[RMDB]
RNA sequence: GGGAACGACUCGAGUAGAGUCGAAAAAUACGCAACUUGGGCAGAAGUACUGCUCCAGUUGUCACUGGACCUCCCCAGAGUAAACUGCCUUUUGAUGACCAGGGCGAAUUGAGUGAAAUCGUCAUGGGCUUAGUAAUGACUUCGGUCAUUACUAAGCAAAAGAAACAACAACAACAAC
Reactivity to 2A3 in 0.01 (KOAc 150mM, MgCl2 10mM, bicine 150mM(pH8.5), 24C), signal-to-noise 2, nucleotides 027 to 126: a000u160a020c050g000c030a000a000c000u020u010g000g020g000c030a010g030a270a030g100u160a140c000u000g000c030u010c010c020a000g000u010u010g000u040c010a010c110u150g050g060a070c010c010u090c030c000c000c020a000g030a000g070u080a090a080a040c050u050g020c030c000u100u080u120u140g130a130u160g030a060c030c000a000g020g000g000c030g000a100a080u110u120g050a120g100u140g080a050a040a110u010c000g020u010c000a040u030g000g060
Reactivity to DMS in 0.01 (KOAc 150mM, MgCl2 10mM, bicine 150mM(pH8.5), 24C), signal-to-noise 2, nucleotides 027 to 126: a060u010a130c180g030c010a000a020c020u000u000g010g000g000c010a000g010a170a130g030u000a160c020u000g000c000u010c020c040a010g000u000u010g000u010c120a120c160u000g010g020a160c140c070u010c040c020c010c040a070g010a070g000u000a030a070a150c060u000g010c060c000u000u000u000u000g000a130u000g010a220c030c040a050g010g020g000c000g010a040a060u000u000g020a130g030u000g000a040a060a090u000c010g030u000c030a030u000g000g000